[RMDB]
RNA sequence: GGGAACGACUCGAGUAGAGUCGAAAAGAUAUGGAAUCCCUAGGGAGCUACAGAUCGGAAACGAUCUGAAUAGCGUUGAUCUAGGAAGAUUCCUAAGUCAAAGUUUGUUACCUUCGGGUAACAAACACGAUCUUAAGACCUUCGGGUCUUAAGAUCGAAAAGAAACAACAACAACAAC
Reactivity to DMS in 0.01 (KOAc 150mM, MgCl2 10mM, bicine 150mM(pH8.5), 24C), signal-to-noise 1, nucleotides 027 to 126: g000a000u000a010u000g000g000a030a010u000c020c000c000u000a020g030g020g000a000g020c000u020a080c000a000g020a000u020c020g000g010a000a000a030c000g000a020u000c000u000g000a080a110u010a010g020c000g010u010u010g020a000u010c000u000a000g000g000a240a180g000a060u000u000c000c020u000a000a070g000u000c000a100a110a230g000u000u000u000g020u000u000a000c000c000u000u040c290g040g000g020u000a000a000c000a000a010a010c000a250
Annotation
The data come from the RNA Mapping Database (RMDB), library TTRDES. Structure probing data (DMS) for a 177-nucleotide construct. The reactions ran in a buffer of 150 mM KOAc, 10 mM MgCl2 and 150 mM bicine (pH 8.5), at 24 C. Reactivities are given for positions 27 through 126.